About this RNA:
Chemical mapping of a 177-nucleotide RNA with 2A3 and DMS. The RNA was probed in 150 mM KOAc, 10 mM MgCl2 and 150 mM bicine (pH 8.5) at 24 C. Reactivities are given for positions 27 through 126. The 2A3 profile rests on 5,445 reads. It was measured as part of the RMDB library OK2TRN.

[RMDB]
RNA sequence: GGGAACGACUCGAGUAGAGUCGAAAACGCUACGCGGUUUGCCCCCUGUCGAUCGCACAUAUUGCUUCGACGGGUUCUCCCGCUGCGCCUUCGCCGCUGAGACCGGGAUCGCUCUAUACUCACUGCAUCAAAUUCCUUAGUUCGCUAAGGAAUUUGAAAAAGAAACAACAACAACAAC
Reactivity to 2A3 in 0.01 (KOAc 150mM, MgCl2 10mM, bicine 150mM(pH8.5), 24C), signal-to-noise 3, nucleotides 027 to 126: c030g020c050u120a020c090g010c030g070g050u040u090u180g030c020c010c000c000c020u030g020u000c010g010a040u040c090g090c200a040c030a180u300a100u100u260g010c000u010u010c000g000a000c000g010g000g000u020u000c030u010c010c000c010g000c020u040g000c000g060c010c010u070u060c050g040c040c000g000c070u070g040a040g040a140c040c000g000g030g030a080u060c030g010c030u000c000u060a080u030a090c020u030c060a050c080u090g030c010a090
Reactivity to DMS in 0.01 (KOAc 150mM, MgCl2 10mM, bicine 150mM(pH8.5), 24C), signal-to-noise 5, nucleotides 027 to 126: c030g020c030u010a060c200g010c030g010g010u010u000u000g020c080c090c070c050c020u020g000u010c010g010a010u000c250g020c020a070c300a150u010a130u010u000g000c000u000u000c000g010a010c020g000g000g000u000u000c060u000c070c020c020g020c060u000g010c020g010c050c070u000u000c060g020c040c030g000c040u000g010a120g010a080c070c030g000g010g000a070u000c050g000c030u000c030u000a090u000a090c070u000c070a110c080u010g010c150a200